RNA sequence: GGGAACGACUCGAGUAGAGUCGAAAAGAUAUGGAAUACCUACCCACCGUGAUGAGCGUUGAAAUCGGAAACGAUGGAGCUCUGCCACGAGGGUAUUCCUAAGUCAAAAGAGCGCUUCGGCGCUCAAUCAACUAUGAGUGUUCGCACUCAUAGUUGAAAAAGAAACAACAACAACAAC
Reactivity to DMS in 0.01 (KOAc 150mM, MgCl2 10mM, bicine 150mM(pH8.5), 24C), signal-to-noise 3, nucleotides 027 to 126: g010a140u010a170u000g010g010a020a010u010a010c000c000u000a120c030c010c020a300c110c010g000u000g020a260u000g000a010g000c000g010u010u020g000a050a100a020u000c010g000g000a110a060a110c020g030a020u000g010g000a120g000c010u000c000u010g030c120c020a000c020g010a070g000g000g000u010a010u000u000c000c000u000a060a100g010u000c130a070a070a080a130g000a020g010c000g010c010u000u000c200g010g030c000g030c000u000c000a040a090
Reactivity to 2A3 in 0.01 (KOAc 150mM, MgCl2 10mM, bicine 150mM(pH8.5), 24C), signal-to-noise 3, nucleotides 027 to 126: g060a070u210a170u290g020g000a000a020u000a040c030c000u190a300c060c010c020a020c030c010g000u000g040a080u020g010a000g020c030g250u300u070g030a060a000a010u010c000g010g040a060a030a030c010g000a010u030g030g010a010g000c000u040c030u040g090c050c010a000c010g010a010g000g000g020u010a000u010u000c000c010u010a040a010g120u070c040a120a030a120a030g000a010g000c030g000c060u070u160c270g180g000c020g000c000u010c000a000a000